RNA sequence: GGGAACGACUCGAGUAGAGUCGAAAAGCGGUGAUACAGAGGUGUGAGGCUGAGAAGUCUCACUUGGAGACAUCGUCGAAUUAAAGCUGGUUUAAGUACACCUCUGAUCUUAGACUAGCAGAAGAUAGUAAGAGUAUGUAUUCGUACAUGCUCUUACAAAAGAAACAACAACAACAAC
Reactivity to 2A3 in 0.01 (KOAc 150mM, MgCl2 10mM, bicine 150mM(pH8.5), 24C), signal-to-noise 9, nucleotides 027 to 126: g010c000g000g000u010g010a040u100a030c010a000g000a000g000g000u000g000u000g010a000g000g000c000u010g020a010g020a100a010g000u000c000u000c000a000c000u010u030g020g020a090g010a010c000a000u000c000g070u040c040g090a040a050u170u140a240a080a020g000c000u010g000g000u010u000u010a000a000g000u010a010c000a000c020c000u000c000u000g000a000u010c000u000u000a000g000a010c010u010a000g000c030a010g060a110a020g050a070u290a050
Reactivity to DMS in 0.01 (KOAc 150mM, MgCl2 10mM, bicine 150mM(pH8.5), 24C), signal-to-noise 7, nucleotides 027 to 126: g000c010g000g010u000g000a070u010a040c010a020g000a010g010g010u000g030u000g000a010g000g000c000u000g000a240g000a160a010g020u000c000u000c000a010c020u020u020g010g010a150g020a070c010a010u000c000g000u010c090g020a130a090u040u060a050a070a140g010c000u000g000g000u010u010u000a000a010g010u000a190c060a020c010c000u000c000u000g000a040u000c010u000u000a010g000a010c000u000a010g010c010a220g010a100a080g010a130u030a130
Chemical mapping of a 177-nucleotide RNA with 2A3 and DMS. The RNA was probed in 150 mM KOAc, 10 mM MgCl2 and 150 mM bicine (pH 8.5) at 24 C. It was measured as part of the RMDB library OK1LIB. Reactivities are given for positions 27 through 126. The 2A3 profile rests on 34,208 reads. For 2A3 the reverse transcriptase was SuperScript II with manganese.